[RMDB]
RNA sequence: GGGAACGACUCGAGUAGAGUCGAAAACAGUAAAGAGUCUUCGCCGUUUCGCGAAACCAACUACGAACCGCAGCUUUUUCUUGGUUUUGCUACCGAUUAUCGCUUUGCCGGCUGGACGCUGCGCGACCGCACCCCUGCCCUUCGGGGCAGGGGUGCGAAAAGAAACAACAACAACAAC
Reactivity to 2A3 in 0.01 (KOAc 150mM, MgCl2 10mM, bicine 150mM(pH8.5), 24C), signal-to-noise 1, nucleotides 027 to 126: c020a000g110u150a000a100a000g100a010g000u000c090u000u000c020g070c180c140g050u060u030u160c090g060c000g000a040a000a000c040c000a070a000c040u080a090c130g020a080a020c000c000g100c040a020g000c020u020u010u010u040u020c000u020u000g000g020u020u010u070u020g060c000u080a140c000c110g120a140u100u000a120u240c030g010c060u130u080u120g070c010c000g010g000c000u020g050g040a030c060g000c000u000g080c000g000c000g030a030c110
The record gives the reactivity of an RNA of 177 nucleotides to 2A3. The 2A3 profile rests on 393 reads. For 2A3 the reverse transcriptase was SuperScript II with manganese.